[RMDB]
RNA sequence: GGGAACGACUCGAGUAGAGUCGAAAAGAUAUGGAGUAUUCGUCGGAGCGACGAAGUCGGAAACGACAGAGCUCCGGACGAGAUACUCCUAAGUCAAAACACUCCCUCACUUCGGUGAGGGAGUGAACCUAAGUGUCUAGUUCGCUAGACACUUAGGAAAAGAAACAACAACAACAAC
Reactivity to 2A3 in 0.01 (KOAc 150mM, MgCl2 10mM, bicine 150mM(pH8.5), 24C), signal-to-noise 4, nucleotides 027 to 126: g050a020u090a060u160g000g000a000g000u000a020u030u020c000g000u010c010g030g010a020g000c030g300a300c070g030a170a050g010u000c010g020g040a090a040a050c020g010a010c010a020g060a010g000c010u010c000c010g010g020a010c000g020a040g040a020u000a000c010u000c000c000u010a050a020g000u010c030a000a000a140a070c010a000c000u000c000c000c000u000c000a020c000u030u120c290g150g000u010g000a000g000g000g000a000g000u000g000a010a000
Reactivity to DMS in 0.01 (KOAc 150mM, MgCl2 10mM, bicine 150mM(pH8.5), 24C), signal-to-noise 6, nucleotides 027 to 126: g000a020u000a300u010g010g000a010g010u000a010u000u000c000g020u000c000g010g010a030g000c000g010a170c220g000a050a070g000u000c000g000g000a110a090a220c000g010a020c000a030g000a230g000c000u000c000c010g020g010a020c020g000a040g000a020u000a010c000u000c000c000u000a000a080g000u000c040a080a080a110a190c010a010c000u000c000c000c010u000c000a010c000u000u010c190g020g020u010g000a010g000g000g000a000g000u000g010a040a090
Chemical mapping of a 177-nucleotide RNA with 2A3 and DMS. Values cover nucleotides 27 to 126. The 2A3 profile rests on 10,747 reads. 2A3 adducts were read by reverse transcription with SuperScript II with manganese. For DMS the reverse transcriptase was MarathonRT. For DMS, 7,932 sequencing reads were counted. The reactions ran in a buffer of 150 mM KOAc, 10 mM MgCl2 and 150 mM bicine (pH 8.5), at 24 C. Values are in units of 0.01, from 0 to 300, in steps of 10.